[RMDB]
RNA sequence: GGGAACGACUCGAGUAGAGUCGAAAAUGUCCAGGCUUAGUUGUAGGCCUCCUAUUAGGCAACUAAUGGGCUAACAUUGGGUGAAUUGCAUGAAAGCUAAGGCGUAACGCUAUGCUAACCUGCAGCGCUAACUAAGCAGGUUCGCCUGCUUAGUUAGAAAAGAAACAACAACAACAAC
Reactivity to DMS in 0.01 (KOAc 150mM, MgCl2 10mM, bicine 150mM(pH8.5), 24C), signal-to-noise 6, nucleotides 027 to 126: u010g020u010c030c030a050g000g010c010u000u000a040g020u000u010g020u000a080g010g010c010c000u010c040c010u000a020u000u000a010g010g000c260a110a190c010u000a000a020u000g010g020g000c170u000a080a080c130a080u010u010g010g030g020u010g010a080a090u010u000g020c030a030u000g010a050a230a050g000c020u010a080a160g000g000c010g010u010a080a080c160g010c010u000a300u020g000c020u000a030a300c040c040u000g010c020a030g000c210g000
Reactivity to 2A3 in 0.01 (KOAc 150mM, MgCl2 10mM, bicine 150mM(pH8.5), 24C), signal-to-noise 2, nucleotides 027 to 126: u190g000u020c020c020a000g000g000c010u030u060a040g020u200u250g210u130a030g030g020c000c000u000c000c000u020a020u050u020a000g010g000c020a030a010c040u020a030a020u020g040g000g000c010u060a110a020c020a150u100u200g070g000g000u110g110a190a100u100u030g020c000a010u030g020a080a040a010g010c010u060a090a140g060g000c030g050u110a220a040c090g000c020u020a010u160g000c000u000a000a020c000c020u000g000c010a010g000c020g010
The data come from the RNA Mapping Database (RMDB), library RFMREP. This 177-nucleotide RNA was probed chemically with DMS and 2A3. Reactivities are given for positions 27 through 126. Conditions: 150 mM KOAc, 10 mM MgCl2 and 150 mM bicine (pH 8.5), 24 C.